[RMDB]
The record gives the reactivity of an RNA of 177 nucleotides to 2A3 and DMS. The 2A3 profile rests on 5,391 reads. High 2A3 reactivity points to a flexible backbone, as in loops and unpaired stretches. For DMS, 4,661 sequencing reads were counted. Values are in units of 0.01, from 0 to 300, in steps of 10.
RNA sequence: GGGAACGACUCGAGUAGAGUCGAAAAGAAGAUGUGUUCGCACAUCUUCAAAAGCAACGACUUGGACCGGCGAGACAAAGGACCGAUAGCUAAUCGCGACGAAAACAGGCCUCUUCGGAGGCCUGAACAACAGAAGGAAGUUCGCUUCCUUCUGUUGAAAAGAAACAACAACAACAAC
Reactivity to 2A3 in 0.01 (KOAc 150mM, MgCl2 10mM, bicine 150mM(pH8.5), 24C), signal-to-noise 3, nucleotides 027 to 126: g000a000a010g010a010u010g030u000g020u040u080c170g050c090a010c000a000u000c000u000u000c000a000a000a030a000g040c030a050a100c040g110a060c020u040u080g040g050a010c020c000g050g000c020g020a040g010a040c050a070a130a040g040g020a050c010c000g100a100u090a040g040c030u070a090a050u090c030g010c000g050a040c050g030a010a060a040a060c000a000g000g000c000c010u010c020u040u060c160g050g010a000g000g000c000c000u000g000a000a000
Reactivity to DMS in 0.01 (KOAc 150mM, MgCl2 10mM, bicine 150mM(pH8.5), 24C), signal-to-noise 4, nucleotides 027 to 126: g010a010a010g000a010u000g020u000g000u000u010c200g050c010a030c000a010u010c000u000u000c000a040a060a080a150g020c060a080a080c040g000a050c060u000u000g020g010a070c070c030g000g010c040g010a070g010a080c080a040a080a100g000g010a110c120c020g010a050u000a060g000c080u010a070a090u010c090g000c030g000a100c110g010a070a020a090a190c010a020g000g000c000c000u000c000u000u010c170g010g010a000g000g000c000c010u000g010a010a080